[RMDB]
RNA sequence: GGGAACGACUCGAGUAGAGUCGAAAAUCGCGCGGAUCGACGAUACAUGCGCAUCAGUACAGUACGUACGCGCUAUGGCCCGAUCCGAUCGUGUGCUGUCUAUGAUGCGCUCUAUGACGUACGCACAAGUUACACGUAAGUUCGCUUACGUGUAACUAAAAGAAACAACAACAACAAC
Reactivity to 2A3 in 0.01 (KOAc 150mM, MgCl2 10mM, bicine 150mM(pH8.5), 24C), signal-to-noise 9, nucleotides 027 to 126: u100c020g000c010g000c010g040g000a040u060c020g080a070c040g020a040u050a160c050a040u080g000c000g000c020a030u090c040a020g080u040a020c010a030g080u060a030c060g020u010a020c030g020c010g000c050u100a070u100g070g010c000c030c020g000a040u010c030c010g010a060u080c040g020u010g000u020g060c010u040g010u020c020u050a160u220g020a020u030g040c060g030c080u000c000u010a070u140g050a010c040g040u070a020c060g020c010a020c010a080
Reactivity to DMS in 0.01 (KOAc 150mM, MgCl2 10mM, bicine 150mM(pH8.5), 24C), signal-to-noise 8, nucleotides 027 to 126: u010c070g010c070g030c000g000g000a030u000c020g010a120c100g010a100u010a080c090a050u010g010c000g020c010a070u000c120a160g010u000a020c030a080g010u000a080c160g020u010a070c030g000c020g000c030u000a060u000g010g010c030c010c010g000a040u010c060c020g010a030u010c050g010u000g000u000g000c010u000g000u000c080u000a120u010g000a030u000g000c080g000c040u000c110u000a080u010g000a070c060g010u000a080c100g010c060a040c110a090

Conditions: 150 mM KOAc, 10 mM MgCl2 and 150 mM bicine (pH 8.5), 24 C. Chemical mapping of a 177-nucleotide RNA with 2A3 and DMS. Reactivities are rounded to 0.1 and cut off at 0 and 3. Values cover nucleotides 27 to 126. Source: RMDB library OK2TST, as collected in RNAgym.